[RMDB]
RNA sequence: GGGAACGACUCGAGUAGAGUCGAAAACUACAUAGCGGAACUUCCCGGUGGAUUAGAACACGCUCAACUUCCAAAAAUGGAUCACUUAGUAUGUUUUUUACCUGGCACACUUAUGUGGGGAGCAACCAACGGUACUUCAUUAGAAGCAGCACGUACACGUGCUCAUAGCAUUCGUGCUAUGAGCACGAAAAGAAACAACAACAACAAC
Reactivity to DMS in 0.01 (KOAc 150mM, MgCl2 10mM, bicine 150mM(pH8.5), 24C), signal-to-noise 2, nucleotides 027 to 156: c020u010a040c060a120u000a090g020c000g030g020a130a090c060u010u000c030c020c010g030g060u000g000g000a140u000u000a140g030a040a100c070a080c050g000c010u010c060a080a070c050u000u000c050c020a010a060a120a110a190u000g010g000a010u000c010a070c090u000u000a030g020u000a020u010g000u000u000u000u000u000u000a080c060c060u020g010g010c040a040c060a020c020u000u000a050u000g000u000g030g010g000g010a090g010c000a080a140c030c050a050a090c050g000g030u000a040c020u000u000c020a160u010u000a060g000a050a060g030c050a050g020c010a100c070g070u000a090c080a080
Reactivity to 2A3 in 0.01 (KOAc 150mM, MgCl2 10mM, bicine 150mM(pH8.5), 24C), signal-to-noise 4, nucleotides 027 to 156: c030u120a040c040a100u130a070g060c090g040g050a070a060c040u040u020c010c030c000g030g020u070g000g030a100u100u140a100g030a090a010c050a010c070g090c040u050c050a090a130c070u040u030c020c030a060a130a060a120a200u140g010g010a040u070c020a020c070u040u030a050g020u040a040u130g050u030u030u010u000u040u050a080c040c010u010g040g030c010a000c000a010c060u110u080a070u130g020u040g010g020g020g000a010g020c010a020a050c020c030a020a030c020g040g000u040a050c040u030u050c020a130u090u210a050g010a080a000g020c040a010g050c040a010c090g030u100a010c080a010